[RMDB]
RNA sequence: GGGAACGACUCGAGUAGAGUCGAAAAGAUUAUGUGGGAGAGGCGCCCUUUCGUUUCGUCGGAUAAUUAAUUGCCAGUCGCUGGCUUUAGCGAUAUUGAUGUCAUCUGUAGCGAUGACUAUGCUACGUUAAGGUAUGAUCCGGAUACCCCCGGUAAACAUAUCCAUACUGUUCGCAGUAUGGAUAUGAAAAGAAACAACAACAACAAC
Reactivity to 2A3 in 0.01 (KOAc 150mM, MgCl2 10mM, bicine 150mM(pH8.5), 24C), signal-to-noise 4, nucleotides 027 to 156: g060a050u150u110a060u230g040u110g020g010g000a070g030a030g020g020c010g050c000c000c010u020u040u060c050g020u040u050u020c050g020u020c030g010g050a050u050a100a050u250u100a040a100u150u120g010c020c010a040g050u120c030g040c100u030g030g000c000u090u060u060a000g000c010g010a020u010a090u070u130g080a070u090g030u000c010a010u000c020u080g210u220a030g060c030g040a020u030g000a000c000u000a050u100g030c010u030a040c020g030u040u050a050a010g000g010u050a040u110g040a050u050c000c000g000g030a010u100a100c010c000c010c010c020g010g010u040a020a010a000
Reactivity to DMS in 0.01 (KOAc 150mM, MgCl2 10mM, bicine 150mM(pH8.5), 24C), signal-to-noise 3, nucleotides 027 to 156: g000a130u010u010a050u010g020u010g000g010g010a100g030a080g010g040c030g000c080c020c030u030u000u010c050g020u000u000u000c050g020u000c030g000g000a100u000a050a100u000u000a050a130u000u010g020c060c020a110g020u000c030g010c050u010g010g000c050u010u010u000a030g000c000g010a110u000a050u000u010g000a170u010g010u010c010a010u000c020u000g020u000a150g020c170g000a030u000g000a040c020u010a070u010g020c020u000a030c020g000u010u000a030a060g010g000u000a060u010g010a060u000c020c000g050g000a140u000a210c030c030c020c010c000g010g000u010a080a120a140